Source information
Chemical mapping of a 177-nucleotide RNA with DMS and 2A3. The data come from the RNA Mapping Database (RMDB), library OK2TST.
RNA sequence: GGGAACGACUCGAGUAGAGUCGAAAAGCGAACAAACUCAAUAUCAUCAUAACCAAUAAUGGCAUACUGCUCCUGAAUGGAAAUCGCGGCCUCCAUGCAGGCGUGAUAAAAUCCAAUUGCCAUCAGGCUUUAGUUCGAACUUCGGUUCGAACUAAAGAAAAGAAACAACAACAACAAC
Reactivity to DMS in 0.01 (KOAc 150mM, MgCl2 10mM, bicine 150mM(pH8.5), 24C), signal-to-noise 1, nucleotides 027 to 126: g000c060g000a050a050c080a100a080a140c070u000c020a030a020u000a080u000c060a040u000c070a070u030a080a100c020c070a050a120u000a080a020u010g000g000c030a060u000a060c140u000g000c060u010c000c000u000g000a080a070u010g000g010a030a100a050u000c030g020c030g000g000c040c000u000c030c290a120u000g000c160a000g000g030c030g000u000g000a010u000a080a140a080a140u000c050c050a020a030u000u000g000c000c010a160u030c160a070g030g030
Reactivity to 2A3 in 0.01 (KOAc 150mM, MgCl2 10mM, bicine 150mM(pH8.5), 24C), signal-to-noise 1, nucleotides 027 to 126: g050c030g050a040a020c000a120a080a060c030u050c070a040a080u070a090u190c000a000u020c000a040u070a170a080c010c060a050a000u070a090a060u080g000g000c010a070u090a190c130u150g070c050u040c030c010u000g100a080a080u090g010g020a040a090a030u030c000g000c050g130g300c000c000u020c080c030a100u270g030c030a000g020g020c020g010u000g000a020u070a090a110a010a020u000c010c030a030a010u120u080g000c000c010a010u000c050a010g010g000
The RNA was probed in 150 mM KOAc, 10 mM MgCl2 and 150 mM bicine (pH 8.5) at 24 C. 2A3 adducts were read by reverse transcription with SuperScript II with manganese. Values cover nucleotides 27 to 126. Reactivities are rounded to 0.1 and cut off at 0 and 3.